The record gives the reactivity of an RNA of 177 nucleotides to 2A3 and DMS. The data come from the RNA Mapping Database (RMDB), library TTRDEL. DMS adducts were read by reverse transcription with MarathonRT. Conditions: 150 mM KOAc, 10 mM MgCl2 and 150 mM bicine (pH 8.5), 24 C. The 2A3 profile rests on 3,238 reads. Values cover nucleotides 27 to 126.
[RMDB]
RNA sequence: GGGAACGACUCGAGUAGAGUCGAAAAGAUAUGGAAGCGAACAAUGAUGUAUGUAACAAGUGGUCGGAAACGACCACCGCCCAUAUUGAGUCGCUUCCUAAGUCAAAGUGGUGGUUCGCCACCACAACUAUUGACAACCGUUCGCGGUUGUCAAUAGAAAAGAAACAACAACAACAAC
Reactivity to 2A3 in 0.01 (KOAc 150mM, MgCl2 10mM, bicine 150mM(pH8.5), 24C), signal-to-noise 2, nucleotides 027 to 126: g000a010u060a020u160g000g010a000a020g000c000g000a060a050c030a120a110u250g060a070u190g160u180a090u130g100u110a150a110c080a170a080g000u000g000g010u000c030g020g040a080a010a030c020g000a000c000c000a000c000c000g030c040c030c000a030u060a050u030u120g070a180g030u010c010g000c000u000u000c000c000u000a110a030g040u000c040a110a040a110g020u000g000g000u000g020g050u030u080c240g040c080c020a010c010c010a000c010a000a010
Reactivity to DMS in 0.01 (KOAc 150mM, MgCl2 10mM, bicine 150mM(pH8.5), 24C), signal-to-noise 3, nucleotides 027 to 126: g020a020u000a300u000g000g000a040a020g010c000g000a040a020c030a100a090u000g000a070u010g000u010a050u010g010u010a070a080c200a190a070g010u000g000g010u000c040g000g000a050a080a120c010g000a000c000c000a000c000c040g000c300c170c030a020u000a040u010u000g000a130g000u000c000g010c000u010u000c010c010u000a020a080g010u000c060a050a100a140g010u010g000g050u000g020g030u010u010c240g000c000c000a010c000c000a000c000a040a130